RNA sequence: GGGAACGACUCGAGUAGAGUCGAAAAGAUUACGUGUCGUUGUGGAAUCGAUACUACGCACGAGAUUCCAAGGUCUCUGUAGUACGUCCGCUGGUGACGUCUUUGGAGUUACGUUCGAUAUACGAAAGGUAUCAACAACGUUCGCGUUGUUGAUACCAAAAGAAACAACAACAACAAC
Reactivity to 2A3 in 0.01 (KOAc 150mM, MgCl2 10mM, bicine 150mM(pH8.5), 24C), signal-to-noise 2, nucleotides 027 to 126: g060a040u140u080a020c080g040u030g160u180c030g020u000u000g030u000g070g020a070a050u120c000g000a020u020a050c020u030a020c020g060c010a020c050g000a000g050a050u050u030c100c000a060a010g100g020u030c000u000c000u050g030u010a010g040u070a010c000g020u000c000c000g060c220u140g080g160u280g030a010c000g010u010c060u000u010u060g000g060a000g050u050u040a080c020g010u000u020c040g010a010u030a000u020a110c080g030a110a020a020
Reactivity to DMS in 0.01 (KOAc 150mM, MgCl2 10mM, bicine 150mM(pH8.5), 24C), signal-to-noise 2, nucleotides 027 to 126: g000a110u040u050a000c130g070u000g000u010c030g000u000u000g000u000g000g020a170a100u000c020g040a110u010a070c120u010a010c010g000c140a090c060g000a300g000a040u000u000c060c030a060a050g000g010u000c020u020c020u000g000u040a010g000u030a010c010g000u030c000c020g020c090u000g030g000u040g030a000c050g000u000c020u000u000u000g000g000a060g010u020u000a170c040g000u040u000c000g030a130u010a050u000a230c020g000a050a030a100

This 177-nucleotide RNA was probed chemically with 2A3 and DMS. It was measured as part of the RMDB library OK1LIB. 2A3 adducts were read by reverse transcription with SuperScript II with manganese. DMS adducts were read by reverse transcription with MarathonRT.